The data come from the RNA Mapping Database (RMDB), libraries RFM100 and RFMREP. The record gives the reactivity of an RNA of 177 nucleotides to DMS and 2A3. DMS adducts were read by reverse transcription with MarathonRT. Values cover nucleotides 27 to 126.
RNA sequence: GGGAACGACUCGAGUAGAGUCGAAAAUUGCGCGUCCUGAAUUAUGGCAUUGUUUUCGGGUUAAAUCCCACUUAACAAUUAAAAAAUUAAGCAAAAGACAACCACCUUUCCCGCUGACAAUAGCGUUUGCUAAAGAGAAUUUCGAUUCUCUUUAGCAAAAAGAAACAACAACAACAAC
Reactivity to DMS in 0.01 (KOAc 150mM, MgCl2 10mM, bicine 150mM(pH8.5), 24C), signal-to-noise 3, nucleotides 027 to 126: u020u010g000c070g010c060g020u000c020c020u030g010a100a070u020u000a080u000g000g020c120a090u010u010g040u000u000u010u000c170g020g010g000u000u010a050a140a100u040c020c050c010a170c090u000u010a020a050c030a050a070u010u010a000a070a040a190a050a200u020u010a040a020g000c070a050a060a050a060g000a040c050a030a070c030c020a050c020c010u000u000u000c060c010c020g010c070u010g000a060c120a030a100u030a080g010c110g040u000u000
Reactivity to 2A3 in 0.01 (KOAc 150mM, MgCl2 10mM, bicine 150mM(pH8.5), 24C), signal-to-noise 6, nucleotides 027 to 126: u070u070g020c030g000c010g040u050c020c000u020g050a040a060u120u070a100u120g070g010c040a040u020u040g050u040u040u060u080c060g000g000g030u010u040a040a110a130u090c000c000c000a000c000u030u030a020a020c010a040a140u150u190a120a070a040a020a000a070u110u090a030a000g010c020a030a060a060a030g030a010c000a020a020c000c000a010c000c010u000u040u030c010c010c000g000c030u030g040a090c060a130a070u030a090g030c020g050u010u020